Structure probing data (DMS and 2A3) for a 177-nucleotide construct. For DMS the reverse transcriptase was MarathonRT. For DMS, 936 sequencing reads were counted. The 2A3 profile rests on 1,688 reads.
[RMDB]
RNA sequence: GGGAACGACUCGAGUAGAGUCGAAAAGCACGGAGACAUGGCACGGAAACGUGACGGAGGCCCCAUGUCGAACGUGGCUGUCCGAGGCCUCCGUAUUUGACUGGUAAUUCAGUCGUUAGGACAGCUAGGCUAACGAUAGCUUCGGCUAUCGUUAGCCAAAAGAAACAACAACAACAAC
Reactivity to DMS in 0.01 (KOAc 150mM, MgCl2 10mM, bicine 150mM(pH8.5), 24C), signal-to-noise 1, nucleotides 027 to 126: g010c020a130c040g020g000a220g000a050c010a010u000g000g010c100a050c010g000g000a050a050a240c070g000u000g010a090c040g000g000a080g020g000c000c040c040c000a010u000g010u010c000g010a020a100c100g020u000g000g030c030u000g000u000c000c000g040a160g030g000c000c010u000c000c020g050u000a020u000u020u020g010a070c010u020g000g010u010a090a100u000u040c000a000g020u000c000g000u000u000a280g000g000a000c010a000g000c060u000a090
Reactivity to 2A3 in 0.01 (KOAc 150mM, MgCl2 10mM, bicine 150mM(pH8.5), 24C), signal-to-noise 1, nucleotides 027 to 126: g070c010a020c080g040g040a170g020a020c010a000u020g000g000c030a000c060g010g070a050a070a000c040g080u080g060a010c010g010g010a010g010g000c000c010c010c000a000u030g010u010c010g030a180a010c070g000u100g040g000c010u000g000u000c000c020g000a040g000g020c000c000u000c000c000g010u010a140u030u090u220g000a000c000u050g030g010u120a060a140u230u180c000a000g000u010c030g030u020u080a020g040g010a010c100a000g020c030u020a030